[RMDB]
Conditions: 150 mM KOAc, 10 mM MgCl2 and 150 mM bicine (pH 8.5), 24 C. An RNA of 177 nucleotides, treated with 2A3 and DMS and read out base by base. The data come from the RNA Mapping Database (RMDB), library OK2TST. For DMS, 2,150 sequencing reads were counted.

RNA sequence: GGGAACGACUCGAGUAGAGUCGAAAAUUCGAGCCGGGCUUAUCAGGGCGUGACGGGCAAUCUCGACGCGACCUAUAUGGCUGCCAUUGAACGCAUAGCGAUUGAUGGCGCUAUGCCGGACCUGACACGGAUAUCACGAUUUCGAUCGUGAUAUCCGAAAAGAAACAACAACAACAAC
Reactivity to 2A3 in 0.01 (KOAc 150mM, MgCl2 10mM, bicine 150mM(pH8.5), 24C), signal-to-noise 2, nucleotides 027 to 126: u080u030c040g020a010g040c030c010g040g010g000c030u110u070a050u200c050a020g020g000g000c010g020u000g040a030c030g000g010g050c140a120a150u160c010u020c020g030a020c000g030c000g030a090c000c060u040a040u000a010u100g050g000c090u110g040c000c000a000u010u030g040a050a000c000g000c110a220u200a110g010c010g060a070u020u060g020a020u040g030g020c010g000c010u040a030u120g020c000c010g010g030a040c010c020u060g020a040c050a030
Reactivity to DMS in 0.01 (KOAc 150mM, MgCl2 10mM, bicine 150mM(pH8.5), 24C), signal-to-noise 3, nucleotides 027 to 126: u000u000c050g010a090g020c050c020g010g000g020c070u000u010a050u010c220a030g020g000g010c000g050u000g010a160c020g000g010g010c300a140a160u000c010u010c010g020a070c010g030c020g000a010c000c010u000a050u000a060u000g000g000c020u010g050c020c000a050u000u000g000a030a140c130g010c000a100u000a090g000c020g010a090u000u010g000a050u000g000g010c000g000c020u000a020u010g020c030c020g010g010a150c040c040u010g010a060c180a160
Reactivities are given for positions 27 through 126.
The 2A3 profile rests on 2,209 reads.